[RMDB]
RNA sequence: GGGAACGACUCGAGUAGAGUCGAAAAGAUAUGGACGUGGUCGGAGGCUUGGAUUUAACCUCGGAAACGAGGUUUGUCAGCCUUGACCUGCGUCCUAAGUCAAAGGCUUAUCCUUCGGGAUAAGCCAGAAGUGGGGAUAGUUCGCUAUCCCCACUUCAAAAGAAACAACAACAACAAC
Reactivity to 2A3 in 0.01 (KOAc 150mM, MgCl2 10mM, bicine 150mM(pH8.5), 24C), signal-to-noise 2, nucleotides 027 to 126: g050a020u090a020u210g010g000a000c000g000u000g000g010u020c150g190g030a010g020g000c110u210u210g180g000a060u300u300u280a010a000c000c000u000c000g020g000a030a050a000c030g010a000g010g010u000u000u010g000u000c010a000g010c000c030u010u010g000a010c000c000u010g010c010g000u020c000c000u010a100a010g020u020c100a120a080a120g030g000c000u020u000a000u020c000c010u030u090c300g110g000g010a000u000a020a010g010c000c000a010
Reactivity to DMS in 0.01 (KOAc 150mM, MgCl2 10mM, bicine 150mM(pH8.5), 24C), signal-to-noise 2, nucleotides 027 to 126: g000a090u000a300u000g000g010a020c000g040u000g020g000u010c000g000g040a010g000g030c000u000u010g040g020a020u000u000u000a000a020c000c000u000c000g000g010a100a140a280c020g010a000g010g000u000u000u000g010u000c000a050g000c010c010u000u000g010a000c010c020u000g060c010g000u000c000c000u000a050a130g000u010c060a090a160a140g010g010c000u000u000a020u000c000c000u000u010c300g020g000g000a010u000a000a000g010c000c010a000